[RMDB]
An RNA of 177 nucleotides, treated with 2A3 and DMS and read out base by base. The 2A3 profile rests on 11,546 reads. It was measured as part of the RMDB library OK2TST. DMS adducts were read by reverse transcription with MarathonRT.
RNA sequence: GGGAACGACUCGAGUAGAGUCGAAAAAAGUACUCUCCCUCCCACUUGAAUAGGAAGCAGGAGCAGCAGGCCAGGUUGCAGGUUGAGGAAGUCAGAAGUUAACUUGAGCUGAGUUUGCAGCUCUGGAAACUACUACUUGAUUCGUCAAGUAGUAGUUAAAAGAAACAACAACAACAAC
Reactivity to 2A3 in 0.01 (KOAc 150mM, MgCl2 10mM, bicine 150mM(pH8.5), 24C), signal-to-noise 5, nucleotides 027 to 126: a000a000g070u070a030c010u030c000u020c050c010c000u000c010c010c000a040c020u030u080g100a070a050u110a150g060g040a060a000g030c070a030g000g040a020g010c010a010g000c010a000g020g010c010c000a020g050g010u020u070g080c010a000g020g010u030u030g020a020g030g070a080a020g050u060c040a020g030a210a010g100u040u070a040a020c000u010u030g020a000g000c010u020g010a010g090u020u100u120g010c010a010g000c010u000c000u010g020g030a030
Reactivity to DMS in 0.01 (KOAc 150mM, MgCl2 10mM, bicine 150mM(pH8.5), 24C), signal-to-noise 9, nucleotides 027 to 126: a060a060g010u010a090c060u000c030u000c010c010c010u000c010c010c010a140c160u000u010g010a100a090u010a090g010g010a090a070g020c090a160g000g000a060g010c050a070g020c050a050g010g000c020c030a110g010g010u010u000g010c030a020g010g010u000u000g010a050g000g010a060a070g010u010c170a080g010a110a100g010u010u000a050a060c050u000u000g010a050g010c010u000g000a210g010u000u010u010g010c010a030g010c010u000c000u000g010g000a160